Overview:
Chemical mapping of a 207-nucleotide RNA with 2A3 and DMS. Reactivities are given for positions 27 through 156. DMS adducts were read by reverse transcription with MarathonRT. For 2A3 the reverse transcriptase was SuperScript II with manganese. It was measured as part of the RMDB library OK3TST. Conditions: 150 mM KOAc, 10 mM MgCl2 and 150 mM bicine (pH 8.5), 24 C.

RNA sequence: GGGAACGACUCGAGUAGAGUCGAAAACUGCAGGUCAACGGUACUUCUUCAGAUCAGCUAUUGCAGAAGAUAGGUUACCCAAGCGCUCUGGGCCAGUGCGACUGUAUAUAGGAGCUUGUAAUUUGAACCAGAAGCUAACUCUCUCCGAAACAAUGAGAUGAAAAUUAAUCUUCGGAUUAAUUUUCAUAAAAGAAACAACAACAACAAC
Reactivity to 2A3 in 0.01 (KOAc 150mM, MgCl2 10mM, bicine 150mM(pH8.5), 24C), signal-to-noise 2, nucleotides 027 to 156: c020u030g000c010a010g000g030u070c030a030a000c060g000g040u020a030c060u030u010c000u040u050c010a020g030a180u030c040a030g070c050u130a090u240u190g000c030a040g010a120a000g010a090u160a070g060g020u080u060a030c000c010c000a090a020g010c010g000c060u020c030u040g010g060g000c020c020a030g020u040g040c050g070a040c010u030g020u100a090u030a020u050a200g030g020a000g030c020u050u070g040u080a160a200u150u070u250g040a020a040c020c030a020g000a130a010g010c020u010a020a060c030u040c000u000c010u000c060c020g070a020a060a040c040a050a110u150g010a050g010
Reactivity to DMS in 0.01 (KOAc 150mM, MgCl2 10mM, bicine 150mM(pH8.5), 24C), signal-to-noise 1, nucleotides 027 to 156: c020u010g000c020a040g000g000u010c030a060a110c040g010g040u000a060c010u000u010c000u000u000c020a080g000a130u000c010a190g000c020u000a100u000u010g010c090a160g020a070a090g000a100u000a070g020g020u000u000a100c000c020c020a130a180g020c100g020c040u000c040u020g010g000g020c070c070a090g010u010g000c110g010a080c010u000g000u010a160u000a110u030a160g000g010a100g010c050u010u010g040u000a050a140u000u010u000g030a050a060c040c050a110g000a080a110g010c020u000a030a110c030u000c000u000c050u000c000c100g030a140a030a070c040a090a090u000g000a140g010